An RNA of 177 nucleotides, treated with DMS and 2A3 and read out base by base. For 2A3 the reverse transcriptase was SuperScript II with manganese. Conditions: 150 mM KOAc, 10 mM MgCl2 and 150 mM bicine (pH 8.5), 24 C. For DMS the reverse transcriptase was MarathonRT. The 2A3 profile rests on 896 reads. For DMS, 4,519 sequencing reads were counted. The data come from the RNA Mapping Database (RMDB), library OK1LIB.
RNA sequence: GGGAACGACUCGAGUAGAGUCGAAAAAGAAAUUCAAACAUAAAAGCAUAGUGACUGAGGACGGUGCCGUGGUGGUGGUGCAAUUCCCUCGUAAGCGUGCCCGUGAGGGAAACGUUGACGUCCCGGGCUUACGCCCGAGAUUCGUCUCGGGCGUAAGAAAAGAAACAACAACAACAAC
Reactivity to DMS in 0.01 (KOAc 150mM, MgCl2 10mM, bicine 150mM(pH8.5), 24C), signal-to-noise 2, nucleotides 027 to 126: a020g010a070a050a000u040u040c070a110a120a110c200a080u070a050a040a100a030g000c050a090u020a070g000u000g000a030c040u010g010a140g000g010a060c090g010g040u000g000c100c020g000u000g010g020u000g010g020u000g000g000u010g010c070a050a140u000u000c000c000c000u000c000g000u020a040a050g030c090g000u000g000c010c040c000g020u000g000a060g000g000g000a010a070a050c100g010u000u000g020a100c000g010u000c000c000c000g010g020g020
Reactivity to 2A3 in 0.01 (KOAc 150mM, MgCl2 10mM, bicine 150mM(pH8.5), 24C), signal-to-noise 2, nucleotides 027 to 126: a000g140a010a040a010u110u090c040a000a170a080c020a010u170a140a170a020a010g070c020a040u130a120g150u180g070a020c030u000g060a050g080g030a010c020g040g060u030g000c010c080g030u010g030g090u100g000g060u010g000g050u010g080c000a010a100u050u030c000c000c000u010c030g040u050a000a120g010c040g080u120g000c020c010c000g070u070g080a050g000g000g000a070a000a000c010g000u020u100g000a000c000g030u000c000c020c000g000g000g000